[RMDB]
RNA sequence: GGGAACGACUCGAGUAGAGUCGAAAAUGAUUGAGCGUAGCACACACUCAGACUGUACGACAGUCUGACACACACCAACGCUAGUGCAUCGUGUGUGUGAUAUCGAUGUAGCACGAAAAUGAAGUAAUGAGGCCAAAAUGUUCGCAUUUUGGCCUCAAAAAGAAACAACAACAACAAC
Reactivity to DMS in 0.01 (KOAc 150mM, MgCl2 10mM, bicine 150mM(pH8.5), 24C), signal-to-noise 1, nucleotides 027 to 126: u010g000a080u020u000g020a070g030c050g000u020a110g050c010a020c030a030c050a100c140u000c030a010g000a000c000u000g010u010a190c300g020a050c010a000g000u000c010u010g030a020c050a010c020a010c050a060c020c020a020a110c040g010c050u000a100g040u000g040c050a110u000c020g000u000g000u010g000u000g020u000g000a110u000a070u010c060g000a070u020g000u020a050g000c010a030c040g030a020a060a020a070u000g000a060a110g000u000a040a180
Structure probing data (DMS) for a 177-nucleotide construct. The data come from the RNA Mapping Database (RMDB), library M2PK90. The RNA was probed in 150 mM KOAc, 10 mM MgCl2 and 150 mM bicine (pH 8.5) at 24 C.